[RMDB]
RNA sequence: GGGAACGACUCGAGUAGAGUCGAAAAGAAAAGAGCGUAAUCGCGUCUUGACGUGAGUGAGUCUAGACUGUAGCCUAUCCCAAGUGGGAUAGGAUAGCUCACAAUACGCUGAUCUACAGUCAAAAGAACCACGUGAGUGAUUCGUCACUCACGUGGUAAAAGAAACAACAACAACAAC
Reactivity to DMS in 0.01 (KOAc 150mM, MgCl2 10mM, bicine 150mM(pH8.5), 24C), signal-to-noise 2, nucleotides 027 to 126: g000a080a070a150a010g020a120g000c070g030u000a000a300u010c000g000c020g000u000c020u040u010g020a080c000g000u000g000a000g000u000g040a030g000u020c080u000a060g070a020c020u000g000u000a000g000c000c000u000a020u000c000c000c030a300a140g080u010g000g010g000a010u000a000g000g000a040u050a020g000c010u000c000a020c020a100a120u010a000c000g000c000u010g010a150u010c010u000a000c000a000g000u000c000a150a050a120a100g000a180
Reactivity to 2A3 in 0.01 (KOAc 150mM, MgCl2 10mM, bicine 150mM(pH8.5), 24C), signal-to-noise 5, nucleotides 027 to 126: g190a020a080a000a000g040a000g000c000g000u020a040a040u060c010g010c020g040u020c060u200u300g100a010c000g020u010g010a010g000u010g000a000g010u040c020u010a060g010a010c000u000g000u000a000g000c000c000u000a000u020c020c000c010a120a130g300u300g050g000g000a000u010a000g000g000a010u020a000g000c000u000c010a010c000a000a040u070a010c010g000c000u030g030a060u040c000u000a010c000a000g000u020c010a050a040a000a020g120a060
The data come from the RNA Mapping Database (RMDB), library OK1LIB.
Structure probing data (DMS and 2A3) for a 177-nucleotide construct.
DMS adducts were read by reverse transcription with MarathonRT.
The DMS profile rests on 3,006 reads.
For 2A3 the reverse transcriptase was SuperScript II with manganese.
Reactivities are given for positions 27 through 126.